[RMDB]
RNA sequence: GGGAACGACUCGAGUAGAGUCGAAAAGCCGAGAGCUUGCCAUCAAUCUCUUGAUCGCCUGCUUCGCGAAUGGCGUACUUAUUACCAUAGCGAUAAAUCUGACCAUCCAUCUGCGCAUCACCAGCGAAGCUGGAAUUUUCUUCGGAAAAUUCCAGCUAAAAGAAACAACAACAACAAC
Reactivity to DMS in 0.01 (KOAc 150mM, MgCl2 10mM, bicine 150mM(pH8.5), 24C), signal-to-noise 2, nucleotides 027 to 126: g020c050c020g010a100g020a100g020c080u000u000g030c110c060a130u000c070a070a100u010c030u010c070u000u010g010a040u010c120g000c020c040u010g010c080u010u010c020g010c020g000a110a090u010g020g020c060g030u020a060c190u000u000a090u020u000a100c040c010a040u000a130g010c030g010a060u020a060a090a060u000c050u010g020a070c050c010a060u000c050c030a040u000c090u010g020c070g000c020a060u000c040a050c100c030a120g000c080g020a100
Reactivity to 2A3 in 0.01 (KOAc 150mM, MgCl2 10mM, bicine 150mM(pH8.5), 24C), signal-to-noise 2, nucleotides 027 to 126: g000c000c050g150a110g060a000g070c020u060u080g080c070c010a080u100c010a120a000u020c060u040c010u090u070g040a080u070c030g030c020c030u010g040c000u040u040c050g000c000g040a180a100u040g000g030c000g030u100a080c040u080u260a140u130u130a040c010c010a050u060a010g030c010g040a050u080a120a090a030u090c050u060g080a100c000c000a020u060c010c010a050u070c050u060g030c020g010c010a070u020c020a010c020c000a040g000c010g070a030
This 177-nucleotide RNA was probed chemically with DMS and 2A3.
Conditions: 150 mM KOAc, 10 mM MgCl2 and 150 mM bicine (pH 8.5), 24 C.
For 2A3 the reverse transcriptase was SuperScript II with manganese.
For 2A3, 1,280 sequencing reads were counted.